[RMDB]
RNA sequence: GGGAACGACUCGAGUAGAGUCGAAAAAGUUAGUCACUAGCGGAAGCUCAGGAAGAGCAGCUUUGGUCUCUCAGCACUUUAAUCCUGCUUCUCGUUCCCACUUAAUUUCGCAGUUUAUUGUCCUUGACGAUAAAUAUUCGUUCGCGAAUAUUUAUCGAAAAGAAACAACAACAACAAC
Reactivity to DMS in 0.01 (KOAc 150mM, MgCl2 10mM, bicine 150mM(pH8.5), 24C), signal-to-noise 4, nucleotides 027 to 126: a050g000u000u000a100g010u000c090a110c050u000a110g010c050g010g000a080a070g010c120u000c100a050g000g020a060a100g000a050g010c030a100g020c040u000u000u000g020g000u010c100u010c030u000c090a070g030c070a100c030u000u000u000a090a080u010c020c030u000g010c030u000u000c060u000c020g000u000u000c010c010c010a140c180u010u000a050a090u010u000u010c070g020c090a050g000u000u010u000a070u000u010g000u000c060c030u000u000g020a300
Reactivity to 2A3 in 0.01 (KOAc 150mM, MgCl2 10mM, bicine 150mM(pH8.5), 24C), signal-to-noise 4, nucleotides 027 to 126: a000g050u040u040a020g030u080c030a000c130u050a010g020c030g060g030a060a000g010c040u060c200a040g100g070a090a060g040a020g050c070a000g020c030u090u050u080g110g040u050c040u000c000u020c110a020g020c030a030c020u060u080u120a060a050u060c010c000u000g020c000u060u020c050u020c010g010u010u000c000c020c010a030c020u060u160a080a130u050u100u100c090g000c040a030g030u020u110u130a140u120u090g030u050c020c000u030u040g020a010